An RNA of 207 nucleotides, treated with 2A3 and DMS and read out base by base.
RNA sequence: GGGAACGACUCGAGUAGAGUCGAAAACAGGCCACAAAGGCCCUGCAAAUGACCCUCGACGCACUGCGCGAAAUGGAAGACCCCGUCAAGCGUGACGCUGCCGCUGUCGAGCUUUUCGGCACCAAGUCGGAAGACAUGCAAAAGGCUCUCCUGGCACGAUACAGGGAUCAUUCGUGAUCCCUGUAUCAAAAGAAACAACAACAACAAC
Reactivity to 2A3 in 0.01 (KOAc 150mM, MgCl2 10mM, bicine 150mM(pH8.5), 24C), signal-to-noise 2, nucleotides 027 to 156: c030a020g010g000c000c060a090c180a120a140a070g010g010c070c020c010u030g010c060a080a080a140u120g040a080c000c000c010u020c040g040a050c020g000c040a050c090u160g000c040g000c010g050a060a070a040u120g040g040a110a090g030a100c030c010c000c000g020u040c060a070a040g040c030g050u060g030a030c060g010c060u040g040c020c040g040c060u060g030u070c010g010a010g000c000u010u020u020u040c030g060g000c010a020c070c090a120a080g000u030c000g000g060a050a000g050a040c020a040u080g000c010a020a030a000a030g010g020c000u010c010u010c030c020u040g040g000c000a010c080
Reactivity to DMS in 0.01 (KOAc 150mM, MgCl2 10mM, bicine 150mM(pH8.5), 24C), signal-to-noise 1, nucleotides 027 to 156: c010a080g000g000c200c000a020c020a150a200a300g030g030c020c030c000u000g000c050a050a110a160u010g000a120c000c090c000u010c000g060a010c040g000c000a060c100u000g060c040g030c000g020a070a070a080u000g010g000a150a180g010a170c040c010c000c020g000u000c070a100a200g010c060g000u000g030a120c090g010c010u000g010c040c080g110c020u000g000u000c020g010a080g020c010u020u000u000u020c020g000g060c000a110c020c130a060a060g010u010c040g080g070a040a100g010a010c050a120u010g010c000a070a060a030a170g000g000c060u000c020u020c020c020u000g020g000c080a110c070
For 2A3, 2,056 sequencing reads were counted.